The record gives the reactivity of an RNA of 207 nucleotides to 2A3 and DMS.

RNA sequence: GGGAACGACUCGAGUAGAGUCGAAAAAUGGUCUCGAUCUUCUGACCUCAUGAUCCGCAAGGCAGGCUCUUUUCAUCCUACCUAUAAUGACUAGUCCAUCAUUGCCUCAGUAACUUGAUCAUCAGCCCUGGUAGCAGAUAUCCCUCCCCGAAGCUGAACCGUACUUUUAGUUCGCUAAAAGUACGGUAAAAGAAACAACAACAACAAC
Reactivity to 2A3 in 0.01 (KOAc 150mM, MgCl2 10mM, bicine 150mM(pH8.5), 24C), signal-to-noise 3, nucleotides 027 to 156: a000u090g020g000u010c020u010c050g110a140u030c050u160u040c030u120g070a100c010c010u050c080a100u130g050a090u020c030c040g000c120a050a020g020g000c030a030g030g000c020u040c000u110u080u020u030c060a060u050c010c000u050a120c040c010u130a100u080a120a060u050g070a050c050u030a020g070u040c060c040a030u040c020a060u110u190g040c000c000u020c010a020g060u040a040a040c020u050u070g030a020u040c030a000u000c020a040g020c020c000c020u010g060g020u040a040g000c070a010g000a060u050a040u080c000c000c000u030c000c010c000c000g030a040a010g010c020u020g020a010
Reactivity to DMS in 0.01 (KOAc 150mM, MgCl2 10mM, bicine 150mM(pH8.5), 24C), signal-to-noise 2, nucleotides 027 to 156: a110u010g030g030u000c000u000c020g020a150u010c030u000u010c050u010g010a090c020c010u030c080a100u030g020a040u010c000c050g050c090a150a080g000g040c050a080g010g020c100u000c040u040u010u000u010c050a100u000c010c020u000a050c030c010u000a150u010a040a110u010g040a080c040u010a110g020u000c030c040a090u010c030a100u000u000g000c010c030u010c020a080g000u000a010a040c030u000u010g020a130u000c040a050u000c070a110g010c010c030c020u000g000g000u000a050g050c050a080g000a130u000a080u010c010c010c000u000c010c010c020c000g010a030a280g000c040u000g010a090